[RMDB]
The record gives the reactivity of an RNA of 177 nucleotides to 2A3 and DMS. Conditions: 150 mM KOAc, 10 mM MgCl2 and 150 mM bicine (pH 8.5), 24 C. For DMS, 1,399 sequencing reads were counted.

RNA sequence: GGGAACGACUCGAGUAGAGUCGAAAAGUGACAAACGCCCUAUUCAGGCUCGCUUUCACUGUGGCUCCAGUAUUCACUACCUUAACCUGCCACUAGCUAUAAGUCGCCGGCUCAUUCUUCAACAGGCCUACACUUUACCCUUCGGGGUAAAGUGUAGAAAAGAAACAACAACAACAAC
Reactivity to 2A3 in 0.01 (KOAc 150mM, MgCl2 10mM, bicine 150mM(pH8.5), 24C), signal-to-noise 2, nucleotides 027 to 126: g050u000g020a020c070a040a140a000c040g000c000c000c020u050a130u080u100c090a040g050g000c030u020c030g030c000u050u120u020c050a050c020u070g010u060g050g000c020u000c060c000a020g000u050a060u110u120c020a040c080u080a100c000c000u080u110a050a080c020c030u030g010c030c010a020c030u050a020g030c040u070a040u010a300a110g020u040c000g050c030c010g000g000c000u030c050a110u080u040c040u060u090c020a070a080c000a050g080g000c000
Reactivity to DMS in 0.01 (KOAc 150mM, MgCl2 10mM, bicine 150mM(pH8.5), 24C), signal-to-noise 2, nucleotides 027 to 126: g000u010g010a090c280a060a050a110c110g000c300c010c010u010a120u000u000c150a110g010g000c020u000c060g000c040u000u000u020c030a040c000u000g010u000g020g030c050u000c060c090a050g000u030a000u010u010c080a140c080u000a100c060c020u000u000a060a130c070c060u000g010c020c040a080c070u010a090g010c060u000a070u000a040a110g020u010c070g030c060c020g000g000c050u000c030a070u010u000c010u010u000c100a060a060c080a050g000g020c150

In probing experiments dimethyl sulfate is read out at A N1 and C N3, which are open when not base-paired. The data come from the RNA Mapping Database (RMDB), library OK2TRN. 2A3 adducts were read by reverse transcription with SuperScript II with manganese.